[RMDB]
RNA sequence: GGGAACGACUCGAGUAGAGUCGAAAAGCUUGGAUCACUCGCAUCGGUCGCACUCAUAGCACAGGUCAGUUACGCAGCGAUGGUCAUACUCUCCUACGGUGGUACACACUACAUCCGUUAGCAUGCGAAAGGAUGGCUUGUAAUAGGACUGGAGCCGAUGUAUAUGCGAGUUCGCUCGCAUAUACAUAAAAGAAACAACAACAACAAC
Reactivity to 2A3 in 0.01 (KOAc 150mM, MgCl2 10mM, bicine 150mM(pH8.5), 24C), signal-to-noise 4, nucleotides 027 to 156: g050c040u060u090g050g030a030u080c020a030c050u040c050g020c040a060u010c010g050g020u070c030g010c040a040c030u080c030a090u120a060g040c050a020c020a070g070g000u030c010a020g030u060u150a050c050g020c070a030g020c030g030a060u050g010g030u030c030a030u050a140c040u060c010u020c000c010u040a040c040g030g010u070g030g040u080a030c060a000c020a020c080u100a020c020a040u030c010c000g000u030u050a040g030c050a070u090g020c040g060a060a020a020g080g010a040u030g000g010c020u010u010g010u020a060a060u030a120g040g030a030c040u060g050g020a030g000c000c020g010
Reactivity to DMS in 0.01 (KOAc 150mM, MgCl2 10mM, bicine 150mM(pH8.5), 24C), signal-to-noise 3, nucleotides 027 to 156: g020c050u000u010g000g010a170u000c060a070c030u000c030g010c090a180u000c060g020g030u010c040g030c030a110c050u000c050a100u000a050g000c050a090c040a110g000g000u000c030a110g010u000u010a050c080g040c090a080g010c040g080a110u000g000g010u000c060a110u000a060c070u000c060u000c030c010u010a010c040g010g030u010g010g000u000a100c080a090c100a100c030u000a030c020a080u000c000c020g000u000u000a150g010c050a060u010g000c070g020a060a090a080g000g010a070u000g000g000c030u000u000g010u010a060a060u010a100g000g010a060c050u010g020g010a110g020c030c020g000
This 207-nucleotide RNA was probed chemically with 2A3 and DMS. The reactions ran in a buffer of 150 mM KOAc, 10 mM MgCl2 and 150 mM bicine (pH 8.5), at 24 C.